[RMDB]
RNA sequence: GGGAACGACUCGAGUAGAGUCGAAAAUUAUGAUAAACAUGAUACAGAUAUGAUAAAUUUAGUAAGAGUGUCAUUAGAAAAUUGCAAAGAUGAAAGUUCCGCAUCAAGUCCAAGAAUUCUUACACAAGAAGAUGCUAUUAACUAUCUGGUAACAAAAGAUGUAGUGAUAAUUCGUUAUCACUACAUCAAAAGAAACAACAACAACAAC
Reactivity to DMS in 0.01 (KOAc 150mM, MgCl2 10mM, bicine 150mM(pH8.5), 24C), signal-to-noise 2, nucleotides 027 to 156: u000u020a050u010g010a110u000a090a100a230c020a050u000g010a160u000a100c030a060g030a090u000a060u020g010a190u000a070a060a210u000u000u000a140g020u010a060a080g020a110g020u000g010u010c040a110u020u000a070g010a040a070a040a110u020u010g000c010a100a150a170g020a070u000g000a030a140a160g020u000u000c050c090g040c040a080u000c040a080a190g010u000c060c030a040a100g000a000a080u000u000c020u000u000a070c060a140c090a080a130g010a050a080g010a060u000g010c060u000a050u000u000a030a090c110u030a030u000c020u000g030g030u010a060a140c160a050a040a110a190
Reactivity to 2A3 in 0.01 (KOAc 150mM, MgCl2 10mM, bicine 150mM(pH8.5), 24C), signal-to-noise 2, nucleotides 027 to 156: u110u020a080u110g080a090u150a070a160a010c040a070u060g010a040u070a130c010a010g060a040u060a010u120g030a010u140a140a160a080u100u120u090a030g000u030a010a080g020a010g080u030g010u020c050a020u010u110a030g050a050a070a040a020u040u060g000c040a020a060a090g020a030u040g040a050a040a030g030u080u050c070c050g020c010a010u020c020a040a040g030u000c100c010a040a010g020a060a080u020u000c010u010u040a010c040a000c000a060a000g040a060a020g030a070u070g000c010u030a030u090u040a130a020c020u000a020u060c000u030g010g050u070a060a030c020a030a080a030a040